[RMDB]
RNA sequence: GGGAACGACUCGAGUAGAGUCGAAAAACUCCCCCACUGUCCCCGGCCGGAAGCCGGCGAACCCGACAUCCCAGUGAAGAGUCUGGGGACCCCCGUUGGGAAGCGAAGACCCUGUGGAGCUUUACUGCAGCUCUUAGGAAUUCGUUCCUAAGAGCUGAAAAGAAACAACAACAACAAC
Reactivity to DMS in 0.01 (KOAc 150mM, MgCl2 10mM, bicine 150mM(pH8.5), 24C), signal-to-noise 3, nucleotides 027 to 126: a090c090u000c010c000c010c030c030a120c080u000g030u000c020c040c010c040g000g000c050c020g030g020a140a150g000c020c010g000g000c060g000a080a160c050c000c000g010a050c060a070u030c010c000c010a050g010u030g000a160a100g010a150g000u020c000u010g010g000g000g010a170c030c030c020c020c030g020u010u000g000g000g020a120a100g010c050g010a130a030g010a130c050c020c020u040g000u010g000g020a110g000c050u000u010u010a080c050u040g000
Reactivity to 2A3 in 0.01 (KOAc 150mM, MgCl2 10mM, bicine 150mM(pH8.5), 24C), signal-to-noise 3, nucleotides 027 to 126: a000c020u060c010c000c000c010c010a030c020u060g000u030c030c000c000c000g040g000c000c010g150g030a080a010g050c020c000g000g020c040g000a030a030c000c000c010g000a010c010a050u070c020c000c000a030g030u040g080a100a100g060a060g110u000c010u040g030g000g020g010a020c000c000c010c030c010g030u020u060g030g010g020a060a020g030c030g030a030a000g020a040c010c010c000u050g020u050g010g020a020g000c010u100u080u090a150c080u090g020